An RNA of 177 nucleotides, treated with DMS and 2A3 and read out base by base. For 2A3, 546 sequencing reads were counted. Values cover nucleotides 27 to 126. It was measured as part of the RMDB library OK2TRN. The RNA was probed in 150 mM KOAc, 10 mM MgCl2 and 150 mM bicine (pH 8.5) at 24 C.
RNA sequence: GGGAACGACUCGAGUAGAGUCGAAAAUUUCAGCACUACGUGUGAUUAACGAAGAUGUUAUCGACGCCGGUCAGGGGUUUGGUACCCAUCCGCAUAAAGAUAUGGAAAUUCUGACUUAUGUAUUGUCGGCAGAAUGGUGAUUCGUCACCAUUCUGCCAAAAGAAACAACAACAACAAC
Reactivity to DMS in 0.01 (KOAc 150mM, MgCl2 10mM, bicine 150mM(pH8.5), 24C), signal-to-noise 1, nucleotides 027 to 126: u010u000u000c020a100g040c050a020c070u010a010c080g030u000g000u000g000a040u010u030a140a070c050g030a080a030g010a070u010g000u000u000a020u000c030g000a040c130g020c140c080g010g010u000c120a180g000g020g010g010u000u000u030g000g010u000a120c030c020c010a010u000c080c070g000c000a070u000a090a050a050g000a080u010a100u000g000g010a080a110a070u000u010c080u010g020a110c050u000u000a050u000g000u000a090u080u000g000u000c130
Reactivity to 2A3 in 0.01 (KOAc 150mM, MgCl2 10mM, bicine 150mM(pH8.5), 24C), signal-to-noise 1, nucleotides 027 to 126: u030u020u050c070a040g040c020a060c010u180a120c090g070u090g000u040g030a150u150u120a070a000c000g100a170a170g040a080u200g040u150u020a040u050c080g060a040c070g110c150c080g060g030u000c040a060g000g020g030g020u060u140u300g150g000u070a040c020c030c010a000u000c000c040g000c000a000u080a080a090a040g050a010u050a030u210g200g000a060a130a040u160u000c000u010g050a060c000u120u070a060u200g180u050a040u020u280g120u050c000